[RMDB]
Conditions: 150 mM KOAc, 10 mM MgCl2 and 150 mM bicine (pH 8.5), 24 C. This 177-nucleotide RNA was probed chemically with DMS. The DMS profile rests on 786 reads.
RNA sequence: GGGAACGACUCGAGUAGAGUCGAAAAGGCACCUGUAAUCCCAUCUACUCGGGAAGCUGAGGCAGGAGAAUCGCCUGAACGUGGAAGGCAGAGGUUGCAGUGAAGGAAAAGAAAAAAAUGCACAUCCUCCGUUGAGAGAUUUCGAUCUCUCAACGGAAAAAGAAACAACAACAACAAC
Reactivity to DMS in 0.01 (KOAc 150mM, MgCl2 10mM, bicine 150mM(pH8.5), 24C), signal-to-noise 1, nucleotides 027 to 126: g010g040c080a070c040c010u000g020u010a070a160u000c010c020c000a160u000c030u010a040c060u010c080g000g020g020a060a170g010c080u000g010a020g000g000c130a020g010g020a070g030a030a090u000c080g020c050c030u010g000a060a080c090g030u000g000g040a150a060g010g010c070a060g040a070g010g000u010u000g010c060a040g010u010g000a110a080g010g000a010a040a070a070g040a010a000a020a070a100a070a040u000g000c030a020c100a080u000c060c020